[RMDB]
RNA sequence: GGGAACGACUCGAGUAGAGUCGAAAAGGAGCUUGAUUCGUCAAGCUCCAAAAGUUACAGACCCGAUUCCUAGGGUAAACAAGAAGCUUUGCACCGAGGCAAAAAGGAAUGGAUUCGUCCAUUCCAAGAUAUUCUCUAGCUUCGGCUAGAGAAUAUCAAAAGAAACAACAACAACAAC
Reactivity to DMS in 0.01 (KOAc 150mM, MgCl2 10mM, bicine 150mM(pH8.5), 24C), signal-to-noise 3, nucleotides 027 to 126: g000g010a010g010c010u010u010g000a010u000u010c170g020u000c000a010a010g010c000u000c000c000a020a010a020a080g000u010u010a090c250a210g000a080c010c000c000g000a140u000u000c020c020u000a170g000g000g020u000a060a070a050c100a120a090g010a110a130g000c040u000u000u010g000c060a100c120c070g000a070g000g020c100a030a070a030a100a080g000g000a010a000u000g000g010a030u010u000c150g010u000c010c000a000u000u010c000c010a020a020
Reactivity to 2A3 in 0.01 (KOAc 150mM, MgCl2 10mM, bicine 150mM(pH8.5), 24C), signal-to-noise 1, nucleotides 027 to 126: g020g000a000g020c010u010u010g010a010u030u050c030g020u010c060a000a000g000c000u000c000c000a000a000a000a020g000u010u060a030c030a060g130a100c010c000c000g020a050u050u010c000c020u000a020g000g020g030u040a030a060a020c020a030a060g250a170a020g040c090u090u080u100g050c090a110c100c130g070a020g100g000c030a020a010a020a050a070g000g000a010a000u010g000g020a010u030u050c160g010u000c020c000a000u000u000c000c000a000a000